RNA sequence: GGGAACGACUCGAGUAGAGUCGAAAAGACCUUGCUUCCUAAGGACACACUGAGGGAUAUCUUGACCUUCUGUGCUUAGAAACUGCAGAUGUCUGAAGGGGUACACACCUGGCCAGACCCCAUAGAGAUUGCUACCCUUAUUCGUAAGGGUAGCAAUAAAAGAAACAACAACAACAAC
Reactivity to DMS in 0.01 (KOAc 150mM, MgCl2 10mM, bicine 150mM(pH8.5), 24C), signal-to-noise 6, nucleotides 027 to 126: g020a110c030c060u000u010g010c030u000u000c040c010u020a050a090g000g010a130c080a230c090a040c100u010g010a060g000g000g010a120u000a070u010c170u010u010g000a110c020c010u000u000c030u010g010u010g010c030u000u000a040g010a050a050a080c170u010g000c020a030g020a110u000g010u010c020u000g010a130a200g010g010g000g020u010a060c190a040c110a080c040c040u000g010g000c100c020a090g000a090c020c000c010c020a100u010a110g000a120g010
Reactivity to 2A3 in 0.01 (KOAc 150mM, MgCl2 10mM, bicine 150mM(pH8.5), 24C), signal-to-noise 4, nucleotides 027 to 126: g050a000c000c010u020u070g000c020u070u070c010c000u020a030a010g060g040a040c010a000c000a010c140u080g020a020g000g030g040a050u030a110u190c130u070u230g180a130c010c010u030u010c010u040g020u020g010c010u020u010a040g050a070a100a030c060u080g000c000a010g010a170u100g030u010c000u030g020a070a030g020g000g000g070u180a020c060a010c000a020c030c010u030g080g040c020c010a020g030a070c010c000c010c000a020u100a030g150a010g010